Description: The data come from the RNA Mapping Database (RMDB), library RSTRND. Structure probing data (2A3 and DMS) for a 207-nucleotide construct. Values cover nucleotides 27 to 156. DMS adducts were read by reverse transcription with MarathonRT. The reactions ran in a buffer of 150 mM KOAc, 10 mM MgCl2 and 150 mM bicine (pH 8.5), at 24 C. In probing experiments dimethyl sulfate is read out at A N1 and C N3, which are open when not base-paired.
RNA sequence: GGGAACGACUCGAGUAGAGUCGAAAAUUUGCCUCGAUUACCAAGCGGACCGCCGAAAGGACCCCGUGGCCGGGCUAAUUGCUUUGGGUAUGGUCAAAACAUCGAGGAAAAGGAUGAUCCGCAGCGAAACCCUCUUGUUGUACAAAAGUGGGUGGCGACUAUAGUUACGGUUCGCCGUAACUAUAGUAAAAGAAACAACAACAACAAC
Reactivity to 2A3 in 0.01 (KOAc 150mM, MgCl2 10mM, bicine 150mM(pH8.5), 24C), signal-to-noise 2, nucleotides 027 to 156: u030u020u130g030c010c000u000c000g000a010u020u030a050c040c080a070a010g010c020g050g010a060c060c040g050c050c040g170a140a020a010g030g030a130c100c070c020c040g000u080g030g020c050c020g000g000g010c050u070a040a130u090u180g040c030u080u150u270g030g000g000u090a230u090g000g010u000c000a000a050a040a000c040a030u000c010g000a010g010g000a020a020a020a040g040g010a010u040g010a060u040c020c040g040c040a000g040c010g050a110a060a090c000c040c000u040c010u070u040g100u120u100g040u100a080c050a070a200a020a000g010u000g020g000g010u020g050g000c030g000
Reactivity to DMS in 0.01 (KOAc 150mM, MgCl2 10mM, bicine 150mM(pH8.5), 24C), signal-to-noise 2, nucleotides 027 to 156: u000u000u000g010c000c000u000c000g000a040u000u010a060c030c040a130a150g020c050g000g010a160c010c080g000c010c010g040a080a090a220g020g000a110c040c100c030c040g010u010g000g040c030c030g000g030g030c000u010a050a090u000u000g030c020u000u000u010g090g010g050u000a060u000g000g010u000c120a010a060a060a090c080a300u000c000g000a040g000g010a010a030a050a070g020g000a190u000g000a180u000c080c040g050c040a130g000c020g000a090a080a100c000c000c000u010c040u000u010g010u000u000g020u000a300c080a040a030a040a040g020u010g000g020g020u010g030g030c020g020